RNA sequence: GGGAACGACUCGAGUAGAGUCGAAAAUUGACGGCGUCAACUUUGCCUUGAUUGGCUUCAAGAGUGACAAAGGGGUCUAUAUCAACCACGGCCGAGUGGGGGCUGUCGAAGGACCACAAGCUAUCCGUGAUAGGCCUGAGUUCGCUCAGGCCUAUCAAAAAGAAACAACAACAACAAC
Reactivity to 2A3 in 0.01 (KOAc 150mM, MgCl2 10mM, bicine 150mM(pH8.5), 24C), signal-to-noise 3, nucleotides 027 to 126: u080u060g040a020c030g000g010c020g300u000c000a030a000c010u000u020u050g000c000c000u000u010g020a040u030u020g020g020c050u020u020c090a140a050g070a160g160u260g060a200c090a010a080a110g010g070g010g000u000c090u030a190u020a010u230c010a040a030c040c110a090c130g000g000c010c000g000a000g010u050g000g040g010g060g000c010u000g000u020c010g050a060a000g110g000a050c000c000a040c030a140a030g040c030u070a050u190c040c020g130
Reactivity to DMS in 0.01 (KOAc 150mM, MgCl2 10mM, bicine 150mM(pH8.5), 24C), signal-to-noise 1, nucleotides 027 to 126: u020u000g000a020c040g060g030c040g000u000c010a010a010c070u000u000u000g020c000c000u000u000g010a020u010u000g040g000c050u000u020c110a040a120g000a170g070u060g020a110c170a070a130a070g000g070g000g000u000c060u010a060u040a030u020c030a050a140c160c220a150c150g000g000c070c050g000a110g010u000g000g070g000g000g000c010u030g030u000c000g040a020a060g020g000a220c040c010a210c090a130a060g000c140u020a000u010c010c030g000